Chemical mapping of a 177-nucleotide RNA with 2A3 and DMS. Source: RMDB library OK2TST, as collected in RNAgym. The DMS profile rests on 3,562 reads.

RNA sequence: GGGAACGACUCGAGUAGAGUCGAAAAUGGGUGGUGAACGGGUCGAGCGCCACGUCGGUGAUGAUGCCCAGCUCCGGAAAGCGCUCGCGCAGGGCACGGGUGGCGCGCUGGGCGAUGCCUUCCGGGAACUCCUGCAGGAGUUCGCUCCUGCAGGAGUAAAAGAAACAACAACAACAAC
Reactivity to 2A3 in 0.01 (KOAc 150mM, MgCl2 10mM, bicine 150mM(pH8.5), 24C), signal-to-noise 2, nucleotides 027 to 126: u090g030g000g030u050g000g020u120g040a120a030c060g030g020g030u040c040g020a030g020c040g030c020c000a040c050g120u090c030g040g030u050g040a150u030g010a000u120g000c000c010c030a040g030c030u040c030c000g020g050a060a020a000g120c120g000c050u010c020g000c020g030c000a020g060g040g000c030a020c060g110g030g080u130g040g000c010g000c000g030c010u010g000g090g060c010g000a010u100g000c020c020u000u000c000c000g010g000g010a040
Reactivity to DMS in 0.01 (KOAc 150mM, MgCl2 10mM, bicine 150mM(pH8.5), 24C), signal-to-noise 2, nucleotides 027 to 126: u010g000g010g010u000g010g010u010g010a060a080c090g010g000g030u010c060g020a100g010c040g010c030c040a040c080g000u010c060g010g010u000g010a110u000g010a110u000g010c020c020c020a140g010c160u010c010c010g010g000a020a020a060g000c110g020c070u000c010g000c040g010c010a020g010g020g030c040a070c080g000g010g010u010g020g020c160g000c020g000c000u000g010g020g000c020g010a010u000g000c010c020u000u000c010c010g000g010g010a070